[RMDB]
An RNA of 207 nucleotides, treated with 2A3 and read out base by base. The RNA was probed in 150 mM KOAc, 10 mM MgCl2 and 150 mM bicine (pH 8.5) at 24 C. Reactivities are given for positions 27 through 156. The 2A3 profile rests on 634 reads.
RNA sequence: GGGAACGACUCGAGUAGAGUCGAAAAAGAGUUUUCUUGGAACGCUGAGUUAUAUAGUUUAAUGGGGAAGUUUGCGUUCUGGACAAUCUUUUGCACCAACGUAAACGCCUCUUCAAGUGAAGGAUUUUUGAUUGGCAUAAAUUGGUUGAAUAAGACCCCAGUGUAAGUGGUUCGCCACUUACACUGGAAAAGAAACAACAACAACAAC
Reactivity to 2A3 in 0.01 (KOAc 150mM, MgCl2 10mM, bicine 150mM(pH8.5), 24C), signal-to-noise 2, nucleotides 027 to 156: a000g090a020g020u000u020u050u070c060u110u070g020g000a080a000c040g000c010u020g010a000g080u150u060a160u040a060u070a100g040u110u150u120a120a080u160g000g000g000g010a120a100g050u010u030u010g000c000g000u080u030c030u040g000g000a000c020a000a020u200c150u110u200u080u070g020c050a020c030c000a010a040c010g010u020a020a020a020c020g000c000c000u030c000u030u030c080a030a040g030u030g030a020a000g030g020a090u020u040u040u000u080g100a140u080u070g000g030c020a020u000a100a050a070u100u090g010g020u000u050g120a170a110u120a170a000g020a090c010c000